[RMDB]
RNA sequence: GGGAACGACUCGAGUAGAGUCGAAAAUGAUUGAAGUUGUCUGAUGCAAUUUGAGCUUGCUAUAGCAAGAAAGUCUAACCUAUUCCAGUGUUCCCCUCCAUGAGACCAACUGUUAUACAGACUUAAAACUCAUAUCGGUGUUCGCACCGAUAUGAGUAAAAGAAACAACAACAACAAC
Reactivity to DMS in 0.01 (KOAc 150mM, MgCl2 10mM, bicine 150mM(pH8.5), 24C), signal-to-noise 1, nucleotides 027 to 126: u000g000a080u000u030g000a130a130g030u020u000g010u010c040u000g020a220u040g010c090a010a050u000u010u000g000a090g020c160u000u000g000c070u020a120u000a050g050c000a070a030g000a080a140a090g020u000c030u000a110a050c050c030u000a050u010u030c030c150a060g020u030g000u000u000c010c000c030c020u000c020c020a060u000g000a030g010a050c050c160a040a190c040u000g030u000u010a050u000a160c000a190g000a050c120u010u000a010a040a020